[RMDB]
RNA sequence: GGGAACGACUCGAGUAGAGUCGAAAAUUCAAAGACUUGGCAGGGUUGGACGAUGCAAACCUGGAUUUGCAUUAAGAGUGGGAUACACAGAGAAAGGAAUUGAAGAGGUUCCAGAAUUUAUUGCAACGCAGGGAUGGUAAUUCGUUACCAUCCCUGCAAAAGAAACAACAACAACAAC
Reactivity to DMS in 0.01 (KOAc 150mM, MgCl2 10mM, bicine 150mM(pH8.5), 24C), signal-to-noise 1, nucleotides 027 to 126: u020u000c060a070a060a140g000a140c100u050u000g030g020c000a010g020g000g020u030u030g070g000a070c160g000a000u000g000c000a000a020a050c010c110u060g000g040a090u000u000u000g050c020a000u000u000a060a020g030a060g010u000g000g000g000a180u010a040c070a020c080a120g000a110g010a090a060a070g000g000a060a040u000u020g000a070a080g000a060g010g010u000u000c040c020a080g010a000a060u000u000u010a040u090u000g020c070a060a110c210
Reactivity to 2A3 in 0.01 (KOAc 150mM, MgCl2 10mM, bicine 150mM(pH8.5), 24C), signal-to-noise 1, nucleotides 027 to 126: u070u000c000a040a030a050g090a020c000u050u060g090g000c040a000g000g000g130u120u120g010g050a050c130g000a000u050g000c110a000a000a000c000c090u020g210g060a300u000u000u000g000c000a000u000u160a000a070g050a000g040u030g000g050g000a020u110a100c060a030c070a000g150a000g130a060a010a010g000g000a090a040u050u040g000a160a000g010a060g000g000u020u040c000c000a000g090a010a010u260u000u260a280u180u160g000c060a000a100c160

Conditions: 150 mM KOAc, 10 mM MgCl2 and 150 mM bicine (pH 8.5), 24 C. The record gives the reactivity of an RNA of 177 nucleotides to DMS and 2A3. 2A3 is a SHAPE reagent: it acylates the 2'-hydroxyl of flexible nucleotides of all four kinds. Values cover nucleotides 27 to 126.